[RMDB]
RNA sequence: GGGAACGACUCGAGUAGAGUCGAAAAGAUAGCUUUAACCGUUCAAGAGAUAUUUGGCUUUAAAGUUUGAAUCGCGAGAGAGCGUGGACAGCGGGGAGACGAAGGCAGGCUCGCUGUCUGUGUCUCCGUACGAGCUAGGCUUCGGCCUAGCUCGUACAAAAGAAACAACAACAACAAC
Reactivity to 2A3 in 0.01 (KOAc 150mM, MgCl2 10mM, bicine 150mM(pH8.5), 24C), signal-to-noise 1, nucleotides 027 to 126: g040a030u060a030g030c000u000u000u010a110a000c050c050g100u160u180c090a080a000g000a000g150a070u130a250u150u110u060g100g020c010u000u050u090a000a150a000g000u050u120u200g070a040a070u010c030g000c160g090a000g010a000g000a000g060c000g000u050g040g000a000c000a000g000c000g000g080g070g020a230g020a030c070g030a000a000g080g110c050a040g100g000c000u030c060g040c000u000g000u000c000u050g000u000g040u020c030u000c020c030